[RMDB]
RNA sequence: GGGAACGACUCGAGUAGAGUCGAAAAGAUAUGGAGCCUCGAUAAGUCGCCAUCGGAAACGAUGGUCCGACUUUUGACGAGGACUCCUAAGUCAAAAGUACAGCAAGGCUUCGGCCUUGCUGUACAAGGUAUCACAUAACUUCGGUUAUGUGAUACCAAAAGAAACAACAACAACAAC
Reactivity to DMS in 0.01 (KOAc 150mM, MgCl2 10mM, bicine 150mM(pH8.5), 24C), signal-to-noise 3, nucleotides 027 to 126: g010a060u000a300u000g030g000a010g010c010c000u000c000g030a140u000a020a020g020u000c000g000c020c000a010u000c000g010g000a100a090a130c000g020a020u000g010g000u010c120c020g000a010c000u000u000u000u010g010a190c090g000a010g000g000a080c000u000c000c010u010a030a090g010u020c030a080a100a120a120g000u000a010c000a000g000c000a010a000g000g020c000u000u010c270g030g000c000c020u000u000g000c000u000g000u000a000c000a040a040
Reactivity to 2A3 in 0.01 (KOAc 150mM, MgCl2 10mM, bicine 150mM(pH8.5), 24C), signal-to-noise 3, nucleotides 027 to 126: g000a010u070a050u120g000g000a000g010c010c010u010c020g060a080u040a230a040g020u000c010g020c020c000a000u010c000g030g000a060a030a020c010g010a000u000g000g010u020c020c010g010a010c010u080u030u040u090g120a030c030g000a040g020g020a120c000u000c000c010u000a090a020g040u010c030a070a040a050a180g010u000a000c020a000g000c000a000a010g010g030c020u180u300c300g050g030c010c000u000u010g000c010u000g000u000a000c000a010a000
The record gives the reactivity of an RNA of 177 nucleotides to DMS and 2A3. Conditions: 150 mM KOAc, 10 mM MgCl2 and 150 mM bicine (pH 8.5), 24 C.